This 177-nucleotide RNA was probed chemically with DMS and 2A3. For 2A3, 1,061 sequencing reads were counted. For 2A3 the reverse transcriptase was SuperScript II with manganese. DMS (dimethyl sulfate) methylates the pairing face of unpaired adenines and cytosines. Conditions: 150 mM KOAc, 10 mM MgCl2 and 150 mM bicine (pH 8.5), 24 C. It was measured as part of the RMDB library M2PK90.
RNA sequence: GGGAACGACUCGAGUAGAGUCGAAAAAACACUGUGUAGGAUAGGUGGGAGGCUUUGAAGUGUGGACGCCAGUGUGCAUGGAGCCGACCUUGAAAUACCACCCUUUAAUGAAGAAAAACAAAGCCAACUCACACUUACGAUUCGUCGUAAGUGUGAGAAAAGAAACAACAACAACAAC
Reactivity to DMS in 0.01 (KOAc 150mM, MgCl2 10mM, bicine 150mM(pH8.5), 24C), signal-to-noise 2, nucleotides 027 to 126: a040a020c110a050c010u000g000u000g040u000a090g000g000a050u000a060g000g010u000g000g000g000a200g020g000c020u000u000u000g000a110a090g000u000g020u000g020g000a040c030g040c080c100a030g030u010g030u010g020c050a040u000g010g000a070g030c020c010g000a070c300c000u000u000g010a020a050a040u000a080c030c030a070c010c000c030u000u000u000a040a090u010g010a110a070g040a030a030a020a070a140c110a040a060a050g010c050c050a060a250
Reactivity to 2A3 in 0.01 (KOAc 150mM, MgCl2 10mM, bicine 150mM(pH8.5), 24C), signal-to-noise 1, nucleotides 027 to 126: a000a030c050a000c010u060g030u000g000u070a000g000g090a050u030a030g000g050u070g010g050g010a170g000g000c000u150u130u090g020a030a010g030u010g040u000g050g040a010c010g000c030c000a010g030u090g020u010g040c010a020u040g000g000a000g000c030c010g010a000c040c020u000u020g010a040a040a010u040a020c000c000a000c010c000c000u100u060u100a200a120u260g150a110a180g040a050a090a010a000a010c030a080a020a000g020c010c020a010a060